[RMDB]
RNA sequence: GGGAACGACUCGAGUAGAGUCGAAAAUCCCUCGGUAAUGGCGAAUGGGACCCAGAACUCUCUCUAGAUUCCCAGAGAGAAUCGAGAGAAAACUGGCUCUCCCUUAGCCAUCCGAGUGGACGUUCGUGGAUCUCUAAGUUCGCUUAGAGAAAAAGAAACAACAACAACAAC
Reactivity to DMS in 0.01 (KOAc 150mM, MgCl2 10mM, bicine 150mM(pH8.5), 24C), signal-to-noise 8, nucleotides 027 to 129: u000c020c000c020u020c010g010g000u020a030a010u000g000g020c000g030a180a070u000g020g020g020a020c230c000c000a000g000a120a260c230u010c000u000c010u000c030u030a160g030a020u000u000c010c020c160a180g030a080g020a170g000a040a020u010c010g000a030g020a010g010a010a040a110a160c020u000g000g000c040u010c040u000c010c000c010u010u010a250g010c030c000a030u000c040c000g000a000g020u030g030g010a030c090g010u000u000c060g000u040g000g000a170
Reactivity to 2A3 in 0.01 (KOAc 150mM, MgCl2 10mM, bicine 150mM(pH8.5), 24C), signal-to-noise 9, nucleotides 027 to 129: u010c000c000c000u000c000g020g000u100a120a040u010g010g000c010g040a060a030u060g000g000g000a020c050c000c000a010g020a070a070c020u000c000u000c000u000c020u060a080g000a010u010u010c010c030c160a070g060a000g000a010g000a140a000u010c010g000a000g000a000g000a010a030a010a020c000u000g000g010c000u010c000u000c000c010c000u010u020a000g000c000c000a000u000c000c000g000a000g000u140g000g000a020c040g030u040u050c090g050u140g070g010a060